[RMDB]
RNA sequence: GGGAACGACUCGAGUAGAGUCGAAAACUCGCUCAAACAUACAGAGAUGUUGUGCGAUAUGAAUCUCUCUGCAUUAGAAUGGUCGAAGAAUCAGCGGCGAUUCGAGACCUAAUUAGAAGCCGCAUUAACAGCUUUGGAACACGCCUUGCUGACGUGAAUCAUGCCCGUAUUUCGAUACGGGCAUGAUAAAAGAAACAACAACAACAAC
Reactivity to DMS in 0.01 (KOAc 150mM, MgCl2 10mM, bicine 150mM(pH8.5), 24C), signal-to-noise 2, nucleotides 027 to 156: c060u000c020g000c060u030c050a110a100a190c130a080u000a060c030a020g020a100g050a040u010g040u000u000g030u000g040c050g000a220u000a100u020g000a100a110u000c080u000c020u000c010u000g030c040a060u020u010a130g000a170a110u000g000g010u000c030g020a240a180g000a040a020u000c010a100g070c100g010g050c080g000a080u000u000c000g000a300g000a110c000c000u000a020a060u000u000a200g010a080a080g000c020c020g020c020a250u000u000a040a050c030a090g020c030u010u000u040g010g000a110a180c000a020c000g010c010c010u000u000g010c220u000g000a070c000g010u000g000a140
Reactivity to 2A3 in 0.01 (KOAc 150mM, MgCl2 10mM, bicine 150mM(pH8.5), 24C), signal-to-noise 3, nucleotides 027 to 156: c010u000c000g000c010u050c020a170a090a060c020a030u200a040c070a030g160a000g000a090u010g000u010u010g010u010g010c000g010a020u030a100u240g210a160a150u060c070u010c000u000c030u110g070c030a140u030u080a130g100a180a060u180g030g010u010c020g000a060a020g000a040a030u000c020a080g000c000g010g000c000g000a000u000u000c010g000a000g000a000c000c000u060a020a010u010u040a020g070a220a020g000c000c000g000c000a020u040u120a080a060c000a000g060c040u140u230u260g070g020a120a050c030a000c060g050c000c000u010u060g000c000u050g000a060c020g010u020g030a050